RNA sequence: GGGAACGACUCGAGUAGAGUCGAAAAUUGACGGUGGGGUAGUCUUUACUCCAAUGAGCAUCGAACCACAGCGAAGUGGGUUCAUCGCAAAGAUGCAUUAGUCACGGAGCCACGUCGACAUGGCUAAAAUCCGAGGAUAUUUCGAUAUCCUCGGAUUAAAAGAAACAACAACAACAAC
Reactivity to DMS in 0.01 (KOAc 150mM, MgCl2 10mM, bicine 150mM(pH8.5), 24C), signal-to-noise 5, nucleotides 027 to 126: u000u010g000a030c020g010g010u010g010g010g000g000u000a010g010u010c210u020u010u000a030c010u000c000c010a040a100u000g010a130g000c010a020u000c040g010a040a100c010c020a030c030a090g030c120g010a100a120g030u000g000g000g000u010u000c060a100u010c170g010c170a080a100a120g000a020u000g010c010a150u000u010a080g010u000c020a050c140g000g000a090g010c030c040a060c070g010u000c070g000a100c090a070u010g000g010c010u000a040a050
Reactivity to 2A3 in 0.01 (KOAc 150mM, MgCl2 10mM, bicine 150mM(pH8.5), 24C), signal-to-noise 3, nucleotides 027 to 126: u060u060g010a010c030g020g050u050g000g000g060g000u010a000g060u090c000u130u190u010a020c000u020c000c000a000a080u130g040a020g000c000a010u020c040g030a030a040c020c000a040c030a070g170c190g160a270a070g020u090g040g030g000u030u040c060a130u080c070g020c130a040a090a040g020a010u010g000c010a050u050u150a020g000u010c000a000c060g040g020a010g020c040c010a020c010g040u050c020g050a060c030a090u020g010g000c010u020a160a110
Source information:
The record gives the reactivity of an RNA of 177 nucleotides to DMS and 2A3. Conditions: 150 mM KOAc, 10 mM MgCl2 and 150 mM bicine (pH 8.5), 24 C. For 2A3 the reverse transcriptase was SuperScript II with manganese. For DMS, 5,131 sequencing reads were counted. For 2A3, 2,900 sequencing reads were counted.